[RMDB]
RNA sequence: GGGAACGACUCGAGUAGAGUCGAAAAUAGCGUAUGCGUAUGCGUAUGCGUAUGCGUAUAUAUAUGCGCGCUAUUAUAUACGCGCGCGCUAUGCGUAUAUAGCGGCGCGCUAUGCGGCGUAUAUAUAAGUGUCGUUGAGGUUCGCCUCAACGACACUAAAAGAAACAACAACAACAAC
Reactivity to DMS in 0.01 (KOAc 150mM, MgCl2 10mM, bicine 150mM(pH8.5), 24C), signal-to-noise 1, nucleotides 027 to 126: u020a080g030c010g040u010a010u010g010c030g050u000a000u000g010c230g040u000a050u000g010c000g040u000a000u000g000c000g000u000a050u020a020u000a020u000a010u000g020c010g000c010g020c000u000a080u020u000a100u010a110u010a050c100g000c000g020c050g040c020g020c040u000a030u010g000c230g000u020a080u020a050u010a010g010c060g010g010c030g020c000g000c030u000a020u000g000c200g030g030c000g030u000a020u000a020u000a030u030a050
Reactivity to 2A3 in 0.01 (KOAc 150mM, MgCl2 10mM, bicine 150mM(pH8.5), 24C), signal-to-noise 1, nucleotides 027 to 126: u110a000g030c000g000u000a000u050g000c020g030u020a010u100g300c150g070u300a010u100g000c000g020u020a000u040g020c000g080u010a000u000a000u010a000u000a030u060g000c100g000c020g060c050u010a070u300u110a170u080a000u030a150c020g010c000g020c020g000c000g000c040u010a010u050g000c070g300u080a080u070a000u000a150g010c060g120g000c020g000c000g030c030u010a040u080g000c010g080g000c050g030u030a020u000a000u000a000u000a060